[RMDB]
RNA sequence: GGGAACGACUCGAGUAGAGUCGAAAAGGCCUAGACACUGGCGAUUUUUACCAAACAACUAGAAGACUUACUACAUCUAAUGUUUCUAGUCUAAUUACGCGCUACAAUCUACCCAAUCAUGUGCAUGAAACCACAAGAAUGAUUACUUUAGAUAGUGAAGGCGAGUAUAUUUCGAUAUACUCGCCUUAAAAGAAACAACAACAACAAC
Reactivity to DMS in 0.01 (KOAc 150mM, MgCl2 10mM, bicine 150mM(pH8.5), 24C), signal-to-noise 2, nucleotides 027 to 156: g010g040c040c020u000a110g010a140c030a120c140u000g030g040c000g000a040u000u000u010u000u020a150c050c060a140a130a150c100a090a110c030u000a030g020a090a060g020a090c040u000u000a070c100u000a050c130a060u000c090u000a040a040u010g020u000u010u010c020u000a020g040u000c030u000a040a110u030u000a080c060g000c040g050c050u000a090c050a120a110u000c010u000a050c020c000c000a060a090u000c020a070u000g040u010g040c020a150u000g010a160a080a110c090c010a040c070a070a160g010a120a120u000g010a130u000u000a060c070u000u010u000a080g010a090u000a030g020u000g010
Reactivity to 2A3 in 0.01 (KOAc 150mM, MgCl2 10mM, bicine 150mM(pH8.5), 24C), signal-to-noise 3, nucleotides 027 to 156: g040g010c010c020u020a010g010a050c060a020c090u060g000g000c000g000a020u030u080u020u100u190a170c080c050a080a070a050c030a010a010c030u030a010g020a050a010g080a080c030u100u100a020c040u120a020c020a140u080c090u100a090a060u200g000u000u000u010c030u030a050g010u000c010u030a090a110u110u030a030c080g020c010g000c060u010a030c070a070a040u030c020u040a060c000c000c010a010a020u040c000a040u050g000u010g050c040a050u050g070a110a050a000c020c020a020c020a010a080g060a040a100u070g020a050u100u030a030c030u090u100u080a040g150a120u220a070g130u300g100
The record gives the reactivity of an RNA of 207 nucleotides to DMS and 2A3. Reactivities are rounded to 0.1 and cut off at 0 and 3. For 2A3 the reverse transcriptase was SuperScript II with manganese. The DMS profile rests on 3,292 reads. Reactivities are given for positions 27 through 156. It was measured as part of the RMDB library OK3TST.